The record gives the reactivity of an RNA of 177 nucleotides to DMS and 2A3. 2A3 adducts were read by reverse transcription with SuperScript II with manganese. It was measured as part of the RMDB library OK2TST. For DMS, 1,234 sequencing reads were counted.
[RMDB]
RNA sequence: GGGAACGACUCGAGUAGAGUCGAAAACAGAAACUGCAAGGCGAUUCAGCAGUUUGAGAUCAACUUCGGAGGACACGCAAUCUCAUCUAAAGCACCUUGGAGUAAUGGUCGACGACAGGCUAAACUACUGAUACGUGAGGUUCGCCUCACGUAUCAGAAAAGAAACAACAACAACAAC
Reactivity to DMS in 0.01 (KOAc 150mM, MgCl2 10mM, bicine 150mM(pH8.5), 24C), signal-to-noise 2, nucleotides 027 to 126: c080a160g000a040a070a030c010u010g030c020a110a090g000g030c090g010a120u000u000c080a080g020c070a050g000u000u000u000g000a090g010a030u000c040a050a140c050u000u000c030g010g000a020g000g000a060c090a090c180g010c060a110a110u010c060u020c110a070u000c060u000a040a110a150g030c060a020c030c010u010u000g000g000a020g000u020a060a060u030g010g000u000c020g000a170c140g000a090c060a060g020g000c060u000a030a070a050c200u000a170
Reactivity to 2A3 in 0.01 (KOAc 150mM, MgCl2 10mM, bicine 150mM(pH8.5), 24C), signal-to-noise 2, nucleotides 027 to 126: c020a000g070a060a090a000c040u040g000c030a070a110g080g000c040g090a080u080u120c080a010g030c000a020g010u000u030u050g060a050g000a020u060c010a020a180c010u040u000c040g100g000a010g060g000a060c130a060c180g070c020a070a100u040c050u050c110a180u030c050u210a100a090a010g000c000a040c010c000u010u040g020g000a040g000u050a020a130u050g010g000u020c000g020a010c030g030a020c030a040g080g050c030u100a070a040a070c030u120a000